RNA sequence: GGGAACGACUCGAGUAGAGUCGAAAAAUAGAAUUGAUCUCUCUUGAAACAGAGCCGUAGUUUCAUCUCUCAUAAACCCUAUAGCUUCCAAUGAAUUUUACUGUUUCCGCUCUAUUUAAGACAGUUACAUACCUCACGUCUUCGGACGUGAGGUAUGAAAAGAAACAACAACAACAAC
Reactivity to 2A3 in 0.01 (KOAc 150mM, MgCl2 10mM, bicine 150mM(pH8.5), 24C), signal-to-noise 4, nucleotides 027 to 126: a000u160a030g240a040a110u070u110g060a050u000c010u000c000u000c000u040u070g120a100a060a060c050a010g030a010g010c030c070g080u070a060g050u040u060u060c060a060u030c040u000c000u000c020a030u150a130a170a120c030c000c000u110a100u050a070g050c000u030u000c060c040a050a060u130g030a100a110u080u070u050u100a080c020u020g010u060u030u030c050c020g050c040u000c000u000a140u070u230u040a080a010g070a060c050a020g010u020u040a020
Reactivity to DMS in 0.01 (KOAc 150mM, MgCl2 10mM, bicine 150mM(pH8.5), 24C), signal-to-noise 1, nucleotides 027 to 126: a040u010a160g030a150a080u000u020g000a030u000c030u000c010u000c000u030u010g000a070a030a030c120a190g010a100g000c080c060g000u000a050g040u000u000u000c030a060u000c080u000c030u000c000a030u000a110a060a060c000c050c000u030a130u000a110g050c060u000u000c000c030a030a020u030g020a050a030u020u050u020u040a010c020u000g010u000u050u030c000c070g000c050u000c010u010a040u000u000u030a050a050g000a090c060a100g000u020u000a240